[RMDB]
RNA sequence: GGGAACGACUCGAGUAGAGUCGAAAAAAAAAGGGCUUCUGCCGUGAGUGGCACACGUAGGGCAAAUCGCUUGCUCUACGUGCGGAAUCGACAUCAAGAGAUUUCGGAAGCAUAAUUUUUGCACCGCAGCACAGGAAUGAUUCGUCAUUCCUGUGCUAAAAGAAACAACAACAACAAC
Reactivity to 2A3 in 0.01 (KOAc 150mM, MgCl2 10mM, bicine 150mM(pH8.5), 24C), signal-to-noise 3, nucleotides 027 to 126: a000a000a000a000a000g120g010g000c000u010u000c000u000g010c010c010g030u090g060a110g070u300g010g000c010a000c010a000c000g010u010a010g000g000g010c020a000a020a050u250c150g010c180u020u010g000c000u000c000u000a010c010g000u000g000c010g000g010a000a000u000c010g100a060c100a100u190c060a120a000g040a010g000a060u000u000u000c000g000g000a000a000g000c000a000u040a010a030u010u010u000u010u040g040c080a040c060c010g000c080
Reactivity to DMS in 0.01 (KOAc 150mM, MgCl2 10mM, bicine 150mM(pH8.5), 24C), signal-to-noise 2, nucleotides 027 to 126: a000a020a030a060a070g000g000g010c020u000u000c010u000g000c000c010g030u020g020a190g020u040g020g000c000a010c000a000c000g000u000a020g000g000g000c020a010a000a130u040c240g020c260u000u000g000c000u020c000u000a000c000g010u010g000c010g000g000a000a000u000c000g030a160c240a080u100c300a050a080g000a300g010a000u000u000u000c010g020g000a010a000g000c010a020u000a030a020u010u000u000u000u000g010c090a240c010c010g000c260
An RNA of 177 nucleotides, treated with 2A3 and DMS and read out base by base. It was measured as part of the RMDB libraries RFM100 and RFMREP. The RNA was probed in 150 mM KOAc, 10 mM MgCl2 and 150 mM bicine (pH 8.5) at 24 C.